RNA sequence: GGGAACGACUCGAGUAGAGUCGAAAAGAUAUGGAUAACCGGCCUGCGAUAAGACCCGGUCGGAAACGACCGAGGUCUUUUGACGCAGGCGUUAUCCUAAGUCAAACAGUCCACUUCGGUGGACUGACUCUUGAAAUUACUUCGGUAAUUUCAAGAGAAAAGAAACAACAACAACAAC
Reactivity to DMS in 0.01 (KOAc 150mM, MgCl2 10mM, bicine 150mM(pH8.5), 24C), signal-to-noise 4, nucleotides 027 to 126: g000a030u000a240u000g000g000a020u010a010a000c170c250g040g020c000c010u000g020c010g040a140u000a030a000g000a020c010c000c000g000g010u000c000g010g000a040a050a100c010g010a010c000c000g000a120g020g000u000c010u000u000u010u000g010a220c120g010c000a000g010g030c010g000u000u010a000u000c000c000u000a010a100g000u000c020a140a150a300c020a000g010u000c000c000a010c010u000u010c190g030g020u000g010g000a010c000u000g000a070
Reactivity to 2A3 in 0.01 (KOAc 150mM, MgCl2 10mM, bicine 150mM(pH8.5), 24C), signal-to-noise 2, nucleotides 027 to 126: g000a010u050a010u110g000g000a000u000a010a000c030c090g300g070c040c010u010g000c020g080a100u020a280a000g010a000c020c000c000g030g010u010c000g010g000a100a010a000c010g010a010c000c020g030a060g040g000u100c000u000u020u020u070g040a020c040g000c010a000g010g010c000g000u000u000a000u030c000c000u000a050a010g050u000c010a060a060a160c000a030g010u000c020c000a000c010u040u100c300g180g010u000g000g000a000c000u000g020a030